[RMDB]
RNA sequence: GGGAACGACUCGAGUAGAGUCGAAAACGUUCACUAUGGUUUCAAGAGUAAGUAAAGGUUACCAGGACAUAUUCAAGAUUUUAAGUGAUUUAUCAGAGGCCUAUACUCCCUCGCUAAAUGAUAAAGAAUCCGCUCAUAAUUUCGAUUAUGAGCGGAUAAAAGAAACAACAACAACAAC
Reactivity to 2A3 in 0.01 (KOAc 150mM, MgCl2 10mM, bicine 150mM(pH8.5), 24C), signal-to-noise 3, nucleotides 027 to 126: c000g000u030u040c030a060c080u060a070u180g010g000u050u070u070c080a110a080g050a000g100u040a030a050g050u050a150a080a100g100g000u010u090a010c010c010a030g060g000a010c030a030u150a080u030u130c030a050a120g000a190u080u060u050u230a060a090g030u050g100a060u030u000u110a030u040c030a050g030a010g050g000c000c030u020a040u020a050c060u120c000c020c000u040c000g040c010u090a160a180a020u120g010a030u080a070a070a010g070a030
Reactivity to DMS in 0.01 (KOAc 150mM, MgCl2 10mM, bicine 150mM(pH8.5), 24C), signal-to-noise 3, nucleotides 027 to 126: c110g010u040u000c020a050c070u010a040u000g000g030u010u020u000c030a040a160g000a090g000u000a020a080g000u030a060a080a110g000g020u010u000a050c050c050a080g000g000a100c110a030u030a070u020u020c040a110a130g010a110u020u010u050u030a050a060g020u040g020a120u000u000u000a030u000c020a040g000a160g030g000c050c090u010a170u030a080c050u000c070c020c010u000c100g000c090u010a010a030a060u020g000a060u000a020a030a070g020a120